[RMDB]
RNA sequence: GGGAACGACUCGAGUAGAGUCGAAAAAUCCUCAGGUUCAUAAGCGUGAUGAUUGGGUGUUCAAGCUCCAUGCAUGACAUGUGCCUCCUUUGAACCUUGUUACGACCUUGGCACAUUACCCAUCUGAAAAAGACGUUCGCGUUCGCGCGAACGUCAACAAAUUAUAGGACUUCGGUCCUAUAAUUUGAAAAGAAACAACAACAACAAC
Reactivity to DMS in 0.01 (KOAc 150mM, MgCl2 10mM, bicine 150mM(pH8.5), 24C), signal-to-noise 2, nucleotides 027 to 156: a080u000c000c000u000c050a040g010g010u030u000c030a050u000a060a110g030c110g050u000g040a100u000g020a130u000u000g020g010g000u000g000u010u000c050a090a080g060c040u010c070c100a080u020g040c020a120u010g020a100c200a300u000g040u020g010c010c010u000c080c050u030u000u000g010a040a020c010c030u000u010g020u000u000a120c080g030a060c070c020u000u000g010g030c020a030c030a060u000u000a060c020c020c010a110u000c050u030g000a100a080a080a150a160g010a030c000g030u000u000c010g040c010g050u000u010c300g050c050g100c000g010a000a010c010g030u000c010a020a070
Reactivity to 2A3 in 0.01 (KOAc 150mM, MgCl2 10mM, bicine 150mM(pH8.5), 24C), signal-to-noise 3, nucleotides 027 to 156: a000u020c010c000u010c020a000g000g000u030u000c000a010u080a210a070g040c080g110u080g120a050u060g010a020u160u120g020g020g010u080g050u160u100c050a040a020g000c030u060c110c120a090u220g010c020a020u060g010a050c000a030u030g000u000g000c010c000u050c010c010u020u000u010g000a000a000c000c000u020u090g120u100u100a100c090g050a050c030c060u060u040g010g000c010a000c000a000u010u080a020c000c010c000a020u010c040u050g050a120a050a020a050a030g010a000c000g000u000u000c010g000c000g030u010u080c230g000c000g010c000g120a000a000c000g000u000c000a000a000
Structure probing data (DMS and 2A3) for a 207-nucleotide construct. DMS adducts were read by reverse transcription with MarathonRT. The data come from the RNA Mapping Database (RMDB), library M2RFOK. The 2A3 profile rests on 1,646 reads. Values cover nucleotides 27 to 156. For 2A3 the reverse transcriptase was SuperScript II with manganese.